Conditions: 150 mM KOAc, 10 mM MgCl2 and 150 mM bicine (pH 8.5), 24 C. The record gives the reactivity of an RNA of 177 nucleotides to 2A3 and DMS. 2A3 adducts were read by reverse transcription with SuperScript II with manganese. It was measured as part of the RMDB library OK2TRN.
[RMDB]
RNA sequence: GGGAACGACUCGAGUAGAGUCGAAAAGCGUACUACUAGAUCAUGGACAUGUGAUCCAUGUCAUGACUAGGUACCAUGACAUGACGGAUCAGCUAGCUGACCAUGCGAUCGUACGAUCGAUCUCAUGGUGCGUUUUCCUCUUCGGAGGAAAACGCACAAAAGAAACAACAACAACAAC
Reactivity to 2A3 in 0.01 (KOAc 150mM, MgCl2 10mM, bicine 150mM(pH8.5), 24C), signal-to-noise 2, nucleotides 027 to 126: g020c020g120u060a020c000u000a010c030u030a020g050a300u070c010a020u000g230g090a010c020a050u060g110u150g090a030u000c000c010a010u000g030u000c000a000u030g020a010c010u030a020g010g020u010a010c030c010a030u120g060a020c060a090u100g010a030c060g110g000a170u070c000a000g040c050u120a020g100c010u020g030a010c000c020a010u010g000c000g000a000u000c020g020u070a120c160g070a200u190c000g000a010u000c010u000c000a020u060g010
Reactivity to DMS in 0.01 (KOAc 150mM, MgCl2 10mM, bicine 150mM(pH8.5), 24C), signal-to-noise 1, nucleotides 027 to 126: g020c070g040u000a030c050u000a140c010u000a040g010a120u000c000a000u000g040g050a130c000a010u000g000u000g020a170u010c190c010a000u000g010u010c000a020u000g010a030c010u000a030g000g000u000a060c040c010a030u000g000a070c100a040u000g030a110c110g020g000a010u000c040a070g020c060u000a150g060c090u000g000a070c030c010a000u000g000c080g000a010u000c010g000u000a060c220g000a090u010c040g000a030u000c000u000c020a030u000g020